The record gives the reactivity of an RNA of 177 nucleotides to 2A3 and DMS.
DMS adducts were read by reverse transcription with MarathonRT.
For 2A3 the reverse transcriptase was SuperScript II with manganese.
For 2A3, 980 sequencing reads were counted.

RNA sequence: GGGAACGACUCGAGUAGAGUCGAAAAAGCAAUGCGCUCAGCUGGAAUGUUAGUGAUCACUGAUAACCCAACAACGCAUUGGGUAUCUGAACCUCAGAAAAUGCUAGUGGUAAAGGAAAAACUGAGCAUCCGUUGUGACAUUCGUGUCACAACGGAUAAAAGAAACAACAACAACAAC
Reactivity to 2A3 in 0.01 (KOAc 150mM, MgCl2 10mM, bicine 150mM(pH8.5), 24C), signal-to-noise 2, nucleotides 027 to 126: a000g140c080a090a050u120g020c020g000c030u020c050a000g000c000u030g080g090a080a050u060g090u150u110a110g000u030g150a110u090c000a010c010u010g030a020u080a100a140c000c000c000a000a060c070a010a080c110g040c010a110u000u000g030g000g000u030a030u010c010u010g030a050a090c020c020u130c040a050g070a070a200a000a010u210g020c030u060a020g020u020g110g030u160a070a150a070g020g000a040a120a110a070a000c020u050g010a020g000c010
Reactivity to DMS in 0.01 (KOAc 150mM, MgCl2 10mM, bicine 150mM(pH8.5), 24C), signal-to-noise 2, nucleotides 027 to 126: a030g000c030a050a040u000g000c040g000c000u000c130a030g000c110u000g000g000a220a110u020g000u000u000a000g000u000g000a100u010c140a150c050u000g000a000u000a000a040c220c000c000a010a010c000a160a150c120g000c130a030u000u000g000g000g020u000a060u030c000u070g000a030a080c210c050u020c000a030g030a030a040a110a150u000g030c040u000a110g010u030g000g020u020a060a090a100g000g020a160a040a130a000a160c030u020g000a050g000c160